[RMDB]
RNA sequence: GGGAACGACUCGAGUAGAGUCGAAAAGGACAGAGAGGUGAAGGUCUACACAUCAGGGGCUUGCUCUUGCAAAACCAAACCACAAGACAGACUUGCAAAAGAAGGCAUGCACAGCUCAGCACUGCUCAUCUGGUGAUCAAUUCGUUGAUCACCAGAUAAAAGAAACAACAACAACAAC
Reactivity to 2A3 in 0.01 (KOAc 150mM, MgCl2 10mM, bicine 150mM(pH8.5), 24C), signal-to-noise 2, nucleotides 027 to 126: g060g010a030c030a040g050a010g010a010g030g000u030g070a090a050g020g050u000c020u100a040c070a000c000a090u120c060a020g000g000g030g030c000u030u060g010c000u010c000u010u080g000c030a020a030a020a090c040c000a060a040a040c060c020a030c040a110a000g040a020c060a040g060a040c020u030u030g000c060a000a070a000a090g070a070a030g060g000c020a030u040g000c000a030c000a030g020c010u030c030a010g020c010a010c030u070g010c000u010c020
Reactivity to DMS in 0.01 (KOAc 150mM, MgCl2 10mM, bicine 150mM(pH8.5), 24C), signal-to-noise 4, nucleotides 027 to 126: g000g000a070c050a090g020a050g010a070g020g020u000g010a110a060g010g010u010c040u010a070c110a080c090a050u000c080a050g000g020g010g010c070u020u000g000c010u000c070u020u000g030c080a050a050a060a090c080c060a070a090a130c080c100a120c100a050a050g000a070c070a050g000a060c060u000u000g020c090a030a050a070a100g000a100a050g000g010c060a050u010g010c090a030c090a080g000c030u000c050a020g000c080a090c090u000g000c080u010c110
Chemical mapping of a 177-nucleotide RNA with 2A3 and DMS. It was measured as part of the RMDB library OK2TRN. For 2A3, 2,534 sequencing reads were counted. 2A3 adducts were read by reverse transcription with SuperScript II with manganese.